[RMDB]
RNA sequence: GGGAACGACUCGAGUAGAGUCGAAAAGAUAUGGAUUGAAAUAUAUGGAGAACUCCGGAUCGGAAACGAUCCGUGUUCUAUGAAGUAUAUCGUACGUCCUAAGUCAAAAGAUCAGUUCGCUGAUCAACAAUAAAAAGAAGUUCGCUUCUUUUUAUUGAAAAGAAACAACAACAACAAC
Reactivity to 2A3 in 0.01 (KOAc 150mM, MgCl2 10mM, bicine 150mM(pH8.5), 24C), signal-to-noise 2, nucleotides 027 to 126: g010a010u020a010u090g000g000a020u030u300g110a100a100a000u060a000u000a010u010g000g040a050g010a030a020c050u140c300c200g000g000a020u000c000g000g000a020a030a000c020g000a010u000c020c020g000u000g030u000u000c080u120a300u040g010a000a020g000u010a000u000a000u010c070g020u100a100c260g000u080c010c010u000a030a000g030u000c010a060a070a150a050g020a030u010c010a010g020u090u120c210g030c120u000g010a000u000c010a000a030
Reactivity to DMS in 0.01 (KOAc 150mM, MgCl2 10mM, bicine 150mM(pH8.5), 24C), signal-to-noise 2, nucleotides 027 to 126: g000a010u000a130u020g000g000a020u000u000g000a150a060a010u000a000u000a000u000g000g000a010g000a010a010c000u010c300c050g030g000a020u000c000g000g000a030a020a090c010g010a010u000c000c000g010u000g000u000u000c000u000a190u010g000a070a170g000u000a010u000a000u000c030g010u010a080c300g000u000c000c000u000a030a160g010u000c020a060a100a070a140g000a000u000c010a010g010u000u000c290g020c010u010g000a000u000c000a100a150
The record gives the reactivity of an RNA of 177 nucleotides to 2A3 and DMS. For 2A3 the reverse transcriptase was SuperScript II with manganese. In probing experiments dimethyl sulfate is read out at A N1 and C N3, which are open when not base-paired. The reactions ran in a buffer of 150 mM KOAc, 10 mM MgCl2 and 150 mM bicine (pH 8.5), at 24 C.